This 207-nucleotide RNA was probed chemically with 2A3 and DMS. The data come from the RNA Mapping Database (RMDB), library OK3TST. Reactivities are given for positions 27 through 156.
RNA sequence: GGGAACGACUCGAGUAGAGUCGAAAAUCAAUUACGUUCGAGUGCAACCCUCGCAUGAGCGCGGGGGAUUUGCAGACCGUGGCAGAGCGUGUCGCCGAUUGUUGGAAGACAUACGGCAUUCUGCCUUUGACAGAGCAUCGGGAAUGGUUCGCAACGGCAAUAAUAAAGUCUUCGGACUUUAUUAUUGAAAAGAAACAACAACAACAAC
Reactivity to 2A3 in 0.01 (KOAc 150mM, MgCl2 10mM, bicine 150mM(pH8.5), 24C), signal-to-noise 6, nucleotides 027 to 156: u090c020a010a100u170u100a060c060g020u040u070c040g040a090g090u030g000c010a020a010c010c000c000u000c000g030c030a060u210g220a110g200c140g000c010g050g000g010g000g010a050u050u030u020g000c000a010g030a030c020c010g020u060g020g000c020a010g000a010g040c080g030u080g070u100c060g010c060c000g080a120u060u070g030u020u040g080g110a080a050g010a040c000a010u140a070c030g000g000c000a010u060u010c010u040g010c000c000u020u050u070g020a010c020a020g060a010g050c030a020u070c040g010g000g050a050a060u070g050g030u050u040c030g000c060a030a030c020g050g000
Reactivity to DMS in 0.01 (KOAc 150mM, MgCl2 10mM, bicine 150mM(pH8.5), 24C), signal-to-noise 2, nucleotides 027 to 156: u000c020a080a120u000u000a040c080g020u000u010c040g020a150g020u010g010c000a040a080c000c000c000u000c000g030c020a170u000g030a200g050c230g020c000g020g000g010g040g000a000u000u010u000g000c010a060g010a070c060c040g010u000g010g030c030a090g020a040g020c100g010u000g020u000c030g020c000c040g000a260u010u000g020u010u000g020g040a120a170g020a050c020a070u000a170c030g020g000c010a110u000u000c040u000g010c000c000u000u010u010g010a130c030a110g010a100g000c040a120u000c050g000g010g000a110a100u010g000g010u000u000c020g020c040a080a080c060g010g000
The RNA was probed in 150 mM KOAc, 10 mM MgCl2 and 150 mM bicine (pH 8.5) at 24 C. 2A3 adducts were read by reverse transcription with SuperScript II with manganese.